Structure probing data (DMS) for a 177-nucleotide construct. Reactivities are given for positions 27 through 126. The DMS profile rests on 2,800 reads. Conditions: 150 mM KOAc, 10 mM MgCl2 and 150 mM bicine (pH 8.5), 24 C. The data come from the RNA Mapping Database (RMDB), library TTRINS.
RNA sequence: GGGAACGACUCGAGUAGAGUCGAAAAGAUAUGGAAUAAGUGGUAUCGGUCGAAGAGCAACAGCCCACUGACGUCGGAAACGACGUUUGGGACAUGCUUUAGACCGAUACCACUUAUUCCUAAGUCAGUAAACUACUUCGUUCGCGAAGUAGUUUACAAAAGAAACAACAACAACAAC
Reactivity to DMS in 0.01 (KOAc 150mM, MgCl2 10mM, bicine 150mM(pH8.5), 24C), signal-to-noise 4, nucleotides 027 to 126: g010a040u030a300u010g000g010a000a010u010a000a020g020u010g000g010u000a010u000c010g000g010u000c020g010a160a200g010a020g010c000a000a070c300a230g000c000c010c000a110c300u000g020a000c000g010u010c000g000g000a110a150a300c010g000a010c000g010u000u000u000g010g010g000a020c090a140u000g010c010u000u010u020a300g000a000c000c000g000a000u000a000c000c000a000c000u000u000a000u000u010c000c010u000a010a070g010u010c040a150